[RMDB]
RNA sequence: GGGAACGACUCGAGUAGAGUCGAAAAUGCUUCAUGCCAGCGGCCGAGGAGUGGAAAGAAAAUUGGGACGUCCAGACCUCGUGUGAUGCUGCGACGUUUCGCUUCGAUCAGGAUGGAGCAGCUGCUGCUAUGAUCAGGCGUUCGCGCCUGAUCAUAGAAAAGAAACAACAACAACAAC
Reactivity to 2A3 in 0.01 (KOAc 150mM, MgCl2 10mM, bicine 150mM(pH8.5), 24C), signal-to-noise 1, nucleotides 027 to 126: u040g000c000u030u040c020a010u150g170c000c000a020g020c070g030g030c040c010g030a030g040g000a050g120u110g010g050a060a030a020g030a040a130a080a090u140u150g010g020g010a000c020g000u000c000c000a010g040a200c010c010u040c050g040u060g090u130g070a140u070g000c000u020g020c000g010a020c020g090u040u030u100c010g000c040u010u030c040g040a040u060c030a040g060g030a030u110g020g000a010g020c000a010g000c040u100g000c010u030g000
Reactivity to DMS in 0.01 (KOAc 150mM, MgCl2 10mM, bicine 150mM(pH8.5), 24C), signal-to-noise 2, nucleotides 027 to 126: u020g000c010u000u010c030a030u010g030c080c010a100g010c100g020g050c020c030g010a010g040g000a130g030u000g000g010a020a040a080g000a090a020a100a200u010u010g030g000g040a120c180g010u000c000c000a030g000a120c050c000u020c080g000u030g010u000g040a120u000g030c000u000g000c090g010a060c170g010u000u000u000c010g000c080u000u000c020g000a090u000c120a120g000g000a070u000g000g030a050g050c050a050g000c120u030g000c070u010g010